[RMDB]
The record gives the reactivity of an RNA of 177 nucleotides to 2A3 and DMS. Values cover nucleotides 27 to 126. For DMS the reverse transcriptase was MarathonRT.

RNA sequence: GGGAACGACUCGAGUAGAGUCGAAAAUCCAUGUACUCUAGACGUGACGUAGUACAUGGUACGAUCCUGAUCACGUACCAGGAUCAUGCAUACUAGCUAGAGCACAUGGACAUGAUCAUGGUGAUCGUAGGCUCAGUUCAUUCGUGAACUGAGCCUAAAAAGAAACAACAACAACAAC
Reactivity to 2A3 in 0.01 (KOAc 150mM, MgCl2 10mM, bicine 150mM(pH8.5), 24C), signal-to-noise 3, nucleotides 027 to 126: u000c000c000a010u010g010u000a000c000u030c000u000a020g030a130c060g260u120g100a060c090g050u060a000g010u050a050c030a140u080g060g000u020a030c030g020a010u010c000c010u020g040a050u050c100a040c300g080u110a040c050c000a020g000g000a040u010c020a010u050g000c030a060u030a100c020u020a030g030c000u020a010g020a010g050c000a000c000a000u020g000g000a010c020a040u120g010a010u020c010a030u200g230g030u170g030a020u000c010g070
Reactivity to DMS in 0.01 (KOAc 150mM, MgCl2 10mM, bicine 150mM(pH8.5), 24C), signal-to-noise 2, nucleotides 027 to 126: u010c000c000a000u000g050u000a020c000u000c000u000a030g000a190c150g000u000g000a180c290g030u000a010g000u000a030c300a090u000g020g040u000a020c090g020a010u000c000c040u010g000a020u000c070a100c230g010u000a030c090c010a000g000g000a010u000c020a010u000g000c040a120u000a050c050u000a120g010c030u010a070g000a080g000c060a060c020a050u000g010g000a080c110a030u010g000a020u010c000a180u000g040g000u020g000a020u000c020g030
2A3 adducts were read by reverse transcription with SuperScript II with manganese.